This 177-nucleotide RNA was probed chemically with 2A3 and DMS. The DMS profile rests on 3,424 reads. It was measured as part of the RMDB library VIROID. 2A3 adducts were read by reverse transcription with SuperScript II with manganese.
RNA sequence: GGGAACGACUCGAGUAGAGUCGAAAAUAUCCCACUCGGCUACUUCCGGUAACUAGGAGUUUGCAGUGACGUAAGUUUCGUCCUAAAAGGACUCAUCAGGUAGCCUAAUAGACUACGACUUACGCGGCACUUAGCUUAACUUCGGUUAAGCUAAGUGAAAAGAAACAACAACAACAAC
Reactivity to 2A3 in 0.01 (KOAc 150mM, MgCl2 10mM, bicine 150mM(pH8.5), 24C), signal-to-noise 4, nucleotides 027 to 126: u090a030u020c000c010c010a020c030u070c020g050g000c000u030a000c010u150u070c010c020g110g040u100a110a080c070u080a110g040g030a040g030u070u200u180g000c040a020g030u040g140a150c010g010u010a010a060g000u020u030u140c050g000u000c020c010u080a120a090a050a050g020g010a140c000u000c060a130u030c030a020g180g080u110a010g000c020c000u020a050a020u070a030g030a020c030u030a010c100g010a000c010u000u020a000c010g000c020g060g040
Reactivity to DMS in 0.01 (KOAc 150mM, MgCl2 10mM, bicine 150mM(pH8.5), 24C), signal-to-noise 4, nucleotides 027 to 126: u000a100u000c000c010c010a250c100u000c070g030g010c000u000a010c040u000u010c060c050g010g010u010a050a110c150u000a140g020g020a040g020u000u000u010g010c040a070g020u000g000a150c010g000u000a020a030g010u010u000u000c230g000u000c080c030u010a040a070a120a110g000g000a030c000u010c070a140u020c180a080g020g030u000a020g000c010c000u000a070a180u000a090g000a040c040u000a040c030g000a020c020u000u000a000c020g010c100g010g000